[RMDB]
Description: An RNA of 177 nucleotides, treated with DMS and 2A3 and read out base by base. High 2A3 reactivity points to a flexible backbone, as in loops and unpaired stretches. Conditions: 150 mM KOAc, 10 mM MgCl2 and 150 mM bicine (pH 8.5), 24 C. The 2A3 profile rests on 1,311 reads. The DMS profile rests on 2,931 reads.

RNA sequence: GGGAACGACUCGAGUAGAGUCGAAAAAAAAUAUCAGUUAGUAGAAACUUCACGAACAUGUGCUGUAUAAACGAACUGGUAUAAGUAUAGGUAUAUAUAUAGAUAGCAUCCAAAUAGGUACAGCGCGUCAUCAUAGCACGUUCGCGUGCUAUGAUGAAAAAGAAACAACAACAACAAC
Reactivity to DMS in 0.01 (KOAc 150mM, MgCl2 10mM, bicine 150mM(pH8.5), 24C), signal-to-noise 2, nucleotides 027 to 126: a060a030a050a050u010a000u000c010a020g000u000u000a080g010u000a060g040a160a160a050c000u000u000c010a080c060g020a140a090c260a050u010g020u020g010c050u000g000u000a010u010a040a100a000c020g000a020a010c000u000g000g020u000a000u030a070a040g000u010a030u020a040g000g010u000a020u000a070u010a020u050a010u050a090g010a100u000a080g020c040a130u000c010c030a020a020a110u040a110g000g010u020a000c070a050g000c140g010c090g000
Reactivity to 2A3 in 0.01 (KOAc 150mM, MgCl2 10mM, bicine 150mM(pH8.5), 24C), signal-to-noise 3, nucleotides 027 to 126: a000a000a000a000u000a000u000c010a000g000u000u080a010g050u050a050g200a170a120a080c120u110u030c060a060c100g210a300a170c150a190u230g010u020g020c000u000g030u030a070u110a120a090a030c030g010a000a000c000u020g020g000u030a050u030a040a000g080u000a020u060a190g020g050u010a040u000a000u000a010u000a000u030a260g060a080u070a030g040c020a050u060c030c030a030a130a150u190a090g020g010u050a030c030a050g040c040g000c000g060
For 2A3 the reverse transcriptase was SuperScript II with manganese.